[RMDB]
RNA sequence: GGGAACGACUCGAGUAGAGUCGAAAAACCGACCAGGGCGCACGAGUGACGAUGAGCAUCGCCAGCAACUACAAAAUCCCCGUCGAUGCCUCGGCGAACGUGCAUUCGGUGUCAGCGGUGGGCGAGCCACACGUAAGUGAUUCGUCACUUACGUGUGAAAAGAAACAACAACAACAAC
Reactivity to 2A3 in 0.01 (KOAc 150mM, MgCl2 10mM, bicine 150mM(pH8.5), 24C), signal-to-noise 9, nucleotides 027 to 126: a000c010c000g020a030c030c020a110g020g010g030c040g010c010a030c050g040a040g060u090g030a030c020g040a060u080g030a020g030c020a030u010c010g020c030c010a020g060c040a050a110c040u250a070c110a040a140a030a110u100c020c010c000c010g030u050c010g010a010u040g010c010c020u040c030g020g010c030g030a070a060c020g010u060g020c010a020u040u040c010g030g010u040g030u050c030a030g030c020g070g020u060g020g010g010c040g020a030g050c020
Reactivity to DMS in 0.01 (KOAc 150mM, MgCl2 10mM, bicine 150mM(pH8.5), 24C), signal-to-noise 8, nucleotides 027 to 126: a110c030c050g000a080c040c020a110g010g010g020c080g000c020a030c010g000a090g020u030g000a050c020g000a030u010g010a150g020c020a030u000c010g010c080c040a110g010c120a060a070c140u030a130c210a090a050a100a110u010c020c010c010c050g020u010c020g000a010u000g000c030c010u000c030g010g000c010g000a040a050c060g010u010g000c010a070u010u010c040g010g000u010g000u010c060a100g010c080g000g020u010g000g000g010c040g000a090g000c120

This 177-nucleotide RNA was probed chemically with 2A3 and DMS. For 2A3, 28,461 sequencing reads were counted. For DMS, 26,345 sequencing reads were counted. Reactivities are given for positions 27 through 126. Conditions: 150 mM KOAc, 10 mM MgCl2 and 150 mM bicine (pH 8.5), 24 C.